[RMDB]
RNA sequence: GGGAACGACUCGAGUAGAGUCGAAAAAGAUCCACGCUACGGCGUGGAUCACACGUUCAUCCCUAUUGGGACGGAAGUAGGCAUAGUGCCGAAGGAACGCAUUAGUCAUGCGCUACAGCGCAUGACACACAUCAGAGUCACUUCGGUGACUCUGAAAGCAUUCUAGUACGUUCGCGUACUAGAAUGCAAAAGAAACAACAACAACAAC
Reactivity to DMS in 0.01 (KOAc 150mM, MgCl2 10mM, bicine 150mM(pH8.5), 24C), signal-to-noise 2, nucleotides 027 to 156: a100g000a010u000c000c000a020c010g030c010u000a080c270g100g040c000g100u000g010g000a010u000c000a040c100a010c030g030u000u000c010a150u000c010c010c010u000a160u000u020g040g010g010a040c000g010g050a060a090g020u000a140g000g010c020a210u000a090g010u000g040c000c040g000a150a120g030g050a080a140c060g020c030a120u000u000a110g010u000c030a000u000g020c000g030c010u010a150c300a160g010c000g000c000a020u000g000a030c020a010c140a030c100a150u010c010a020g010a020g000u000c000a000c010u000u010c300g070g000u000g000a020c000u000c000u000g000a000a040a180
Reactivity to 2A3 in 0.01 (KOAc 150mM, MgCl2 10mM, bicine 150mM(pH8.5), 24C), signal-to-noise 7, nucleotides 027 to 156: a000g000a000u000c000c000a000c000g000c000u050a030c270g130g000c000g000u000g010g000a010u000c000a000c000a000c000g000u010u010c010a020u040c020c010c010u160a300u150u300g000g000g000a000c010g040g010a030a010g010u020a010g020g000c040a100u100a250g170u200g170c000c010g000a010a010g020g010a010a010c010g000c040a070u060u150a040g000u000c000a000u010g000c000g000c020u120a140c080a080g000c000g000c000a000u000g000a000c000a000c000a000c000a060u040c000a000g000a000g000u000c000a000c000u080u110c230g080g000u000g000a000c000u000c000u000g000a000a000a000
Annotation: Chemical mapping of a 207-nucleotide RNA with DMS and 2A3. The reactions ran in a buffer of 150 mM KOAc, 10 mM MgCl2 and 150 mM bicine (pH 8.5), at 24 C. It was measured as part of the RMDB library M2RFPK. The 2A3 profile rests on 7,370 reads. For DMS, 3,861 sequencing reads were counted.